An RNA of 177 nucleotides, treated with DMS and read out base by base. Values cover nucleotides 27 to 126. Conditions: 150 mM KOAc, 10 mM MgCl2 and 150 mM bicine (pH 8.5), 24 C. DMS adducts were read by reverse transcription with MarathonRT. The data come from the RNA Mapping Database (RMDB), library TTRINS.
[RMDB]
RNA sequence: GGGAACGACUCGAGUAGAGUCGAAAAGAUAUGGAGUUCGUCGAGGAUAUACUCUUGGAACUACAUAAUCUGUCGGAAACGACAGUUUAUGCCAAGAGUAUAUCCUAAGACAGCGAACUCCUAAGUCGUUCUAACUCUACUUCGGUAGAGUUAGAACAAAAGAAACAACAACAACAAC
Reactivity to DMS in 0.01 (KOAc 150mM, MgCl2 10mM, bicine 150mM(pH8.5), 24C), signal-to-noise 2, nucleotides 027 to 126: g010a090u000a300u000g010g010a010g010u000u000c000g010u000c060g010a010g010g010a000u000a000u000a000c000u000c000u000u000g030g000a070a000c060u040a300c010a000u000a010a010u000c000u010g020u000c000g000g000a180a160a180c000g000a030c000a010g000u000u010u000a000u000g000c010c000a010a000g010a000g020u000a000u000a000u010c000c010u000a010a060g050a080c300a120g000c030g000a000a040c010u000c000c000u000a030a060g000u000c180